[RMDB]
RNA sequence: GGGAACGACUCGAGUAGAGUCGAAAAGAUAUGGAUCCGUAGACCCAUGCACCUCGGAAACGAGGUGAACUACAUGCUACUGGAUCCUAAGUCAAAACGGUCAUCCUUGUUCGCAAGGAUGACCGAAGAUGUGCAUGACGUUCGCGUCAUGCACAUCAAAAGAAACAACAACAACAAC
Reactivity to DMS in 0.01 (KOAc 150mM, MgCl2 10mM, bicine 150mM(pH8.5), 24C), signal-to-noise 1, nucleotides 027 to 126: g000a000u000a070u000g000g000a000u000c000c000g000u000a000g010a300c300c300c200a050u010g020c000a000c000c000u000c000g010g010a030a030a050c010g000a040g010g020u000g000a010a010c170u030a300c020a040u000g000c020u000a050c050u000g080g000a000u010c010c000u000a010a050g010u000c030a130a050a130a160c050g020g000u000c000a010u000c000c000u000u010g000u000u000c300g000c020a010a000g000g000a010u000g000a000c010c000g010a000a030
Reactivity to 2A3 in 0.01 (KOAc 150mM, MgCl2 10mM, bicine 150mM(pH8.5), 24C), signal-to-noise 1, nucleotides 027 to 126: g010a000u040a010u050g000g010a000u000c010c000g000u010a040g220a300c300c140c000a000u020g010c000a010c010c010u000c010g000g000a000a010a000c010g000a000g030g000u000g010a000a000c010u060a050c000a050u060g060c000u000a050c150u300g000g010a010u000c000c010u000a000a000g020u000c040a000a020a050a100c020g000g000u000c000a000u040c000c020u000u000g030u090u060c300g010c180a010a000g000g000a010u010g000a000c000c010g000a000a000